[RMDB]
RNA sequence: GGGAACGACUCGAGUAGAGUCGAAAAUGUUUGCAAUUCGUUGCAAACAAACUAGCGAGAACGUUGCUCGGUAUAAACAGCGAACCCUUGGAAACAAGGGAACUAUGGAACGCUUCGGCGUUCCAAACACAAAUGGUAAAUUCGUUUACCAUUUGUGAAAAGAAACAACAACAACAAC
Reactivity to 2A3 in 0.01 (KOAc 150mM, MgCl2 10mM, bicine 150mM(pH8.5), 24C), signal-to-noise 7, nucleotides 027 to 126: u030g000u000u000u010g000c010a010a020u050u050c190g060u080u010g000c000a010a000a000c000a000a050a010c060u050a030g090c000g020a010g010a120a030c010g010u010u040g000c010u000c010g010g030u200a080u080a140a100a020c020a010g010c020g050a140a120c010c000c000u000u000g010g020a050a030a030c000a000a000g000g000g020a010a000c010u030a080u080g010g000a000a000c000g000c000u040u060c190g050g000c000g000u000u000c000c000a000a030a000
Reactivity to DMS in 0.01 (KOAc 150mM, MgCl2 10mM, bicine 150mM(pH8.5), 24C), signal-to-noise 8, nucleotides 027 to 126: u010g010u000u000u000g010c000a010a040u000u010c170g020u000u000g010c000a010a010a000c000a030a090a130c080u000a130g000c020g010a030g010a100a150c040g010u000u000g010c010u000c020g000g020u010a060u010a030a050a110c050a020g000c040g010a180a200c010c000c000u000u000g010g000a170a090a180c000a010a010g000g000g000a020a040c190u000a120u000g010g000a010a010c000g010c000u000u010c170g020g010c010g010u000u000c000c000a000a040a130
Background:
This 177-nucleotide RNA was probed chemically with 2A3 and DMS. DMS adducts were read by reverse transcription with MarathonRT. The reactions ran in a buffer of 150 mM KOAc, 10 mM MgCl2 and 150 mM bicine (pH 8.5), at 24 C. In probing experiments dimethyl sulfate is read out at A N1 and C N3, which are open when not base-paired. It was measured as part of the RMDB library M2PK50.